[RMDB]
RNA sequence: GGGAACGACUCGAGUAGAGUCGAAAAGAUAUGGAAUCAUAAGGGACGCCACCUGAGGGAGCUGACUACUCGGAAACGAGUAGCAGCGACGAUCUCACAUGGUGGCGUCCCUUAUGAUUCCUAAGUCGAAGACAAUUGUGUUCGCACAAUUGUCUUCAAAAGAAACAACAACAACAAC
Reactivity to DMS in 0.01 (KOAc 150mM, MgCl2 10mM, bicine 150mM(pH8.5), 24C), signal-to-noise 1, nucleotides 027 to 126: g010a120u000a300u000g010g000a010a000u000c000a000u000a060a020g000g000g000a030c010g010c000c000a010c000c010u000g000a010g000g000g020a080g050c000u000g000a210c000u000a000c020u000c000g010g020a200a130a260c000g020a010g010u000a000g000c010a030g000c020g010a040c300g000a030u000c020u010c000a150c300a090u010g000g050u000g000g000c000g000u000c000c000c000u000u000a000u000g000a020u000u000c000c010u000a000a090g000u000c080